[RMDB]
RNA sequence: GGGAACGACUCGAGUAGAGUCGAAAAGCACUUCCAGAGUCUGUGGACUCUGAAUACUAGCGGUCAGUCGUCGUCCACAGACGACGUGAAGUGAUUAUGAGAAUGAUCACACUGACGACGUAUUCUCAUAUGUCCUAUCGCUAGGAAGUGGAUAGGCGGAUGGGCGAUGAUUCGUCAUCGCCCAUCCAAAAGAAACAACAACAACAAC
Reactivity to 2A3 in 0.01 (KOAc 150mM, MgCl2 10mM, bicine 150mM(pH8.5), 24C), signal-to-noise 1, nucleotides 027 to 156: g090c030a000c020u020u000c010c020a010g000a010g040u010c010u080g080u130g060g030a000c000u000c020u080g060a010a000u110a040c070u040a020g100c020g010g020u010c030a030g000u020c000g010u000c040g020u000c010c010a110c020a080g020a000c000g010a020c000g060u100g050a070a030g020u040g010a000u020u030a000u010g090a020g040a070a010u030g060a080u080c020a000c070a040c150u110g030a000c020g010a000c020g030u030a020u130u010c050u000c010a000u020a050u060g020u010c000c000u010a060u060c000g010c030u010a000g050g020a030a020g060u010g020g030a020u030a060g050g030c010